[RMDB]
RNA sequence: GGGAACGACUCGAGUAGAGUCGAAAAGCACGCAGGCUGGAUGGCGACUCGAAGAGACAAUCUAGUGUCUCCGCUAGAAGAGGACCCACCGUCGACAGCACAUCGAACCAGAUCGAGGUCACCAAUAAUCUCUGUAUCCUUUCGAGGAUACAGAGAUAAAAGAAACAACAACAACAAC
Reactivity to DMS in 0.01 (KOAc 150mM, MgCl2 10mM, bicine 150mM(pH8.5), 24C), signal-to-noise 4, nucleotides 027 to 126: g010c110a020c130g000c120a070g000g000c020u020g000g000a050u020g000g000c020g000a190c010u000c040g000a160a120g000a080g020a050c080a100a080u050c150u010a070g010u000g010u000c030u000c040c060g000c050u010a100g000a080a130g020a060g020g000a300c230c010c000a120c050c040g000u000c060g020a100c150a020g010c040a080c100a060u010c040g010a020a140c050c050a040g000a060u010c030g000a100g000g000u000c070a080c010c020a050a050u050a100
Reactivity to 2A3 in 0.01 (KOAc 150mM, MgCl2 10mM, bicine 150mM(pH8.5), 24C), signal-to-noise 9, nucleotides 027 to 126: g050c040a020c120g030c050a030g050g000c020u150g040g050a270u060g050g030c020g050a050c000u020c030g100a150a070g020a020g020a090c030a030a100u090c040u100a030g110u010g030u060c020u020c040c010g020c040u050a020g030a100a020g030a100g020g030a050c010c000c000a010c020c010g040u050c000g060a030c030a010g030c030a020c010a040u050c030g020a050a060c020c010a040g040a130u040c030g010a020g020g060u040c020a030c060c010a030a050u240a110

Background: Chemical mapping of a 177-nucleotide RNA with DMS and 2A3. 2A3 adducts were read by reverse transcription with SuperScript II with manganese. The DMS profile rests on 6,171 reads. Conditions: 150 mM KOAc, 10 mM MgCl2 and 150 mM bicine (pH 8.5), 24 C.